[RMDB]
RNA sequence: GGGAACGACUCGAGUAGAGUCGAAAAGCCUCUCACCUGCUUAUGCACCAACAUAUGUUAGUGUUGAUGACAAGUAUAAGACGAGUGAUGAGCUUUGCGUGAAUCUUAAUUUACCCGCAAAUGUCCCGAAGUGGAGACUUCGGUCUCCACAAAAGAAACAACAACAACAAC
Reactivity to 2A3 in 0.01 (KOAc 150mM, MgCl2 10mM, bicine 150mM(pH8.5), 24C), signal-to-noise 9, nucleotides 027 to 129: g010c000c000u000c000u000c000a000c000c010u060g010c000u010u000a000u010g010c000a040c040c000a010a010c030a020u150a030u270g290u270u210a250g010u020g010u000u010g030a110u070g030a040c080a200a040g000u010a020u000a020a030g070a110c040g010a030g060u000g010a050u210g000a010g000c000u030u040u020g000c000g000u060g040a060a060u030c070u110u150a130a110u170u090u140a150c040c030c000g000c000a020a040a080u130g040u030c000c010c010g020a180a010
Reactivity to DMS in 0.01 (KOAc 150mM, MgCl2 10mM, bicine 150mM(pH8.5), 24C), signal-to-noise 7, nucleotides 027 to 129: g000c080c020u030c000u000c020a000c000c000u070g010c030u020u020a000u020g000c000a040c000c020a010a000c020a040u000a090u030g080u080u090a120g050u030g000u030u010g000a160u000g020a130c250a130a090g030u000a030u000a000a000g020a090c080g030a060g030u000g000a020u100g050a000g050c030u020u000u010g010c030g000u050g000a050a030u050c260u040u040a050a110u050u010u030a130c000c000c000g030c000a030a080a080u060g000u000c000c000c000g020a080a060